[RMDB]
RNA sequence: GGGAACGACUCGAGUAGAGUCGAAAACUGCCCGGUGCUGGAAGGUUAAGAGGACCGGUUAGCCAGUAAUGGCGAAGCUGAGAAUUUAAGCCCCAGUAAACGGCGGUGGUAACUAUAACCAUCCUAAUCUUUUUGCAGUAUUCGUACUGCAAAAAGAAAAAGAAACAACAACAACAAC
Reactivity to DMS in 0.01 (KOAc 150mM, MgCl2 10mM, bicine 150mM(pH8.5), 24C), signal-to-noise 4, nucleotides 027 to 126: c000u000g000c070c000c030g030g020u050g010c000u010g030g010a110a080g070g030u000u010a060a180g000a010g010g010a300c060c010g020g000u000u000a300g000c000c000a020g000u080a100a130u020g000g020c000g000a150a120g000c000u000g010a020g000a300a180u000u000u020a100a060g000c010c000c000c000a010g000u000a000a100a170c170g000g000c080g000g000u000g020g010u000a130a130c250u010a090u040a110a030c010c020a150u030c020c010u000a090a100
Reactivity to 2A3 in 0.01 (KOAc 150mM, MgCl2 10mM, bicine 150mM(pH8.5), 24C), signal-to-noise 6, nucleotides 027 to 126: c010u020g010c010c000c030g180g020u040g010c000u000g000g060a200a130g090g020u090u050a090a050g050a020g050g000a010c000c010g010g010u240u000a000g000c000c000a010g030u150a100a170u040g000g000c000g000a010a000g000c000u000g010a010g000a050a010u030u020u040a040a030g020c010c000c000c010a000g000u010a030a180a000c010g010g000c000g000g010u020g010g010u050a090a030c090u090a100u070a250a010c000c000a030u050c000c010u060a110a130
Chemical mapping of a 177-nucleotide RNA with DMS and 2A3. Conditions: 150 mM KOAc, 10 mM MgCl2 and 150 mM bicine (pH 8.5), 24 C. For 2A3 the reverse transcriptase was SuperScript II with manganese.